[RMDB]
The record gives the reactivity of an RNA of 177 nucleotides to DMS and 2A3.
For DMS, 1,370 sequencing reads were counted.
The RNA was probed in 150 mM KOAc, 10 mM MgCl2 and 150 mM bicine (pH 8.5) at 24 C.
Reactivities are rounded to 0.1 and cut off at 0 and 3.
In probing experiments dimethyl sulfate is read out at A N1 and C N3, which are open when not base-paired.
The data come from the RNA Mapping Database (RMDB), library OK1LIB.
For DMS the reverse transcriptase was MarathonRT.
For 2A3, 840 sequencing reads were counted.
RNA sequence: GGGAACGACUCGAGUAGAGUCGAAAAGACGAGCAGGCGGAUAAUCUUGUGCAGUAUGCAUGCUCGUAACUCCAGCGCACAAGUGGAAGCACAAGAUUUUAAUCCAGCAUAGCGCAGGAGCCGCAGACCUGGAGGAUAGCUUCGGCUAUCCUCCAGGAAAAGAAACAACAACAACAAC
Reactivity to DMS in 0.01 (KOAc 150mM, MgCl2 10mM, bicine 150mM(pH8.5), 24C), signal-to-noise 1, nucleotides 027 to 126: g020a010c010g000a000g050c000a060g010g010c050g040g000a150u070a040a010u000c050u000u000g000u000g000c000a210g000u000a040u010g010c040a020u010g000c000u000c000g030u000a000a120c040u000c000c020a100g010c000g070c000a150c200a040a170g080u000g000g000a150a300g000c000a000c010a100a010g000a150u000u030u000u010a060a060u000c000c010a150g070c170a130u020a060g000c000g040c000a010g000g030a000g000c050c120g010c130a100g010a190
Reactivity to 2A3 in 0.01 (KOAc 150mM, MgCl2 10mM, bicine 150mM(pH8.5), 24C), signal-to-noise 1, nucleotides 027 to 126: g080a000c000g000a000g000c000a010g000g060c000g050g000a050u020a100a000u070c000u000u000g010u000g060c000a010g100u120a100u040g000c030a000u000g000c000u000c000g000u000a060a000c000u000c000c000a070g060c000g000c000a030c000a130a260g160u220g100g000a080a000g050c010a000c040a040a020g000a010u120u000u060u160a030a100u060c040c000a000g050c120a190u230a070g000c030g000c000a050g000g010a000g000c000c000g110c020a000g040a150